[RMDB]
RNA sequence: GGGAACGACUCGAGUAGAGUCGAAAAGAAUAAGUUGGCAAAAAGGAGUAAAGUUACAUAAUCUAGAAACUUCGGUACCGUGUAUAUCUACAACAACUGAGGCUAAACUGGUUGCGGCUGAGAACUCGAGAAUUUAUAUGUUCGCAUAUAAAUUCUCAAAAGAAACAACAACAACAAC
Reactivity to 2A3 in 0.01 (KOAc 150mM, MgCl2 10mM, bicine 150mM(pH8.5), 24C), signal-to-noise 1, nucleotides 027 to 126: g020a000a010u100a170a010g080u030u050g000g020c030a060a000a000a030a060g030g040a040g000u040a070a090a020g000u030u030a040c020a040u180a120a020u080c030u030a030g060a030a090a020c000u010u010c010g000g010u020a020c030c030g090u000g050u040a050u010a020u130c060u060a040c020a070a000c000a020a030c040u030g010a020g050g000c040u040a000a100a100c020u030g010g030u020u080g010c000g030g010c000u010g010a030g000a080a000c070u070c130
Reactivity to DMS in 0.01 (KOAc 150mM, MgCl2 10mM, bicine 150mM(pH8.5), 24C), signal-to-noise 2, nucleotides 027 to 126: g010a100a100u020a110a100g020u020u020g000g010c050a030a040a050a100a070g000g010a080g000u010a060a100a090g010u010u010a080c060a050u000a090a120u000c040u000a080g000a130a120a070c030u000u000c050g010g000u000a070c090c060g000u010g010u000a070u000a050u000c080u020a050c080a040a050c040a020a040c060u020g020a050g010g010c070u000a050a070a090c040u000g010g020u000u000g010c130g000g020c030u000g010a100g010a060a070c150u010c080